[RMDB]
RNA sequence: GGGAACGACUCGAGUAGAGUCGAAAACGCCUGCCACCAUGCCCAGCUAAUUUUUGUAUUUUAGUAGAGAUGGAGUUUUGCCAUAUUGGCCAGGCUGGUCUUGAACUCCUGACCUCAAGUGAUCCACCCACCUCGGCCUCCUAAAGUGCUGGGAUUACCUAAAGACUAUUUUCGAAUAGUCUUUAGGAAAAGAAACAACAACAACAAC
Reactivity to DMS in 0.01 (KOAc 150mM, MgCl2 10mM, bicine 150mM(pH8.5), 24C), signal-to-noise 1, nucleotides 027 to 156: c070g010c050c030u000g040c000c020a050c020c020a040u000g010c030c000c010a130g010c010u010a000a030u000u000u000u000u000g020u000a050u010u010u000u000a050g010u000a110g000a080g010a070u000g000g010a080g030u000u010u010u010g010c000c010a110u000a120u000u000g010g000c000c020a050g010g040c040u000g010g010u010c000u000u000g000a080a080c020u000c020c010u000g000a090c050c020u000c000a080a100g020u000g000a060u000c060c030a050c010c000c010a050c000c000u000c030g020g000c010c010u000c030c060u000a030a040a150g020u000g010c020u000g000g020g010a090u000u010a100
Reactivity to 2A3 in 0.01 (KOAc 150mM, MgCl2 10mM, bicine 150mM(pH8.5), 24C), signal-to-noise 2, nucleotides 027 to 156: c090g050c010c000u070g050c110c000a050c070c000a090u150g010c050c030c030a000g000c020u040a100a110u070u050u070u110u200g090u080a130u070u060u030u070a050g010u030a010g010a020g030a070u030g050g000a010g040u060u050u130u080g050c010c000a010u080a090u110u140g020g000c000c000a000g010g000c040u050g020g010u050c080u040u050g050a070a060c000u010c020c030u020g080a050c010c030u040c010a030a030g020u020g070a060u060c010c010a040c020c000c030a000c000c030u060c060g020g000c020c000u050c000c000u060a120a060a040g050u020g040c010u000g020g000g020a010u060u090a030